[RMDB]
RNA sequence: GGGAACGACUCGAGUAGAGUCGAAAAGGUGAGCCGGCCGUAGUAGAUACCCCUGGCGUCCGGAGCGACGAUGGCUUGGUGGAUGGGUACCGCUCGUGCCGGAGCUACGGCCCGCAGGUAGUCGACCUGUGGGUAUCACAUUCGUGUGAUACCCACAAAAAGAAACAACAACAACAAC
Reactivity to DMS in 0.01 (KOAc 150mM, MgCl2 10mM, bicine 150mM(pH8.5), 24C), signal-to-noise 2, nucleotides 027 to 126: g020g020u000g010a130g030c020c110g010g010c010c000g020u020a010g020u000a080g020a170u010a160c040c020c000c100u000g030g020c100g020u000c020c010g030g000a060g030c020g000a060c130g010a040u000g000g020c040u000u000g010g020u000g020g030a100u010g000g000g010u000a040c020c030g010c080u010c040g010u000g010c020c020g010g010a080g000c010u010a050c030g000g000c000c010c150g010c050a070g010g000u010a060g020u010c070g000a180c030c020
Reactivity to 2A3 in 0.01 (KOAc 150mM, MgCl2 10mM, bicine 150mM(pH8.5), 24C), signal-to-noise 1, nucleotides 027 to 126: g040g020u080g040a070g050c030c010g030g000c030c000g060u030a010g000u000a050g040a190u080a110c000c020c000c030u050g150g080c030g080u030c010c020g000g080a080g030c040g060a080c030g050a080u150g120g000c040u030u020g090g010u100g040g070a090u170g080g000g050u050a050c000c010g000c060u030c020g030u080g010c030c020g000g000a010g050c000u010a000c000g000g000c000c000c000g000c000a010g090g000u110a030g060u060c000g060a100c000c010